[RMDB]
RNA sequence: GGGAACGACUCGAGUAGAGUCGAAAAGUCAAAGCCGUCCUGACUGCAGAGGGAGUUUGUGACAAAAUUCCUCCUCACAGGCAUCUGGCGUGCACUACAGUGCAGGGGAGGGCAUCGAUGGUCCGGCAUACUCUAAGGGUUUCGACCCUUAGAGUAUAAAAGAAACAACAACAACAAC
Reactivity to 2A3 in 0.01 (KOAc 150mM, MgCl2 10mM, bicine 150mM(pH8.5), 24C), signal-to-noise 5, nucleotides 027 to 126: g020u010c030a030a050a030g000c010c020g230u020c000c010u080g130a140c020u020g000c040a020g010a040g040g020g020a030g000u020u050u060g080u060g060a040c080a020a110a000a020u050u030c000c010u020c010c010u030c010a070c020a020g070g020c020a050u060c080u140g150g020c070g010u020g010c030a030c110u210a090c080a080g080u010g070c020a020g000g030g000g010a040g000g010g020c020a030u080c050g030a020u050g040g030u030c020c000g020g060c040
Reactivity to DMS in 0.01 (KOAc 150mM, MgCl2 10mM, bicine 150mM(pH8.5), 24C), signal-to-noise 9, nucleotides 027 to 126: g010u010c040a070a150a150g010c020c010g010u010c010c010u000g010a200c060u000g010c100a040g000a060g010g010g000a040g020u000u000u000g010u010g020a180c220a090a030a030a040u000u000c010c010u000c030c020u000c050a110c100a040g000g000c070a050u010c060u000g010g010c100g030u000g010c040a050c030u010a100c160a100g010u000g010c010a070g000g000g010g000a050g010g000g010c030a040u010c240g000a070u010g010g000u010c030c010g020g040c130
Record summary: An RNA of 177 nucleotides, treated with 2A3 and DMS and read out base by base. DMS adducts were read by reverse transcription with MarathonRT. It was measured as part of the RMDB library OK2TRN.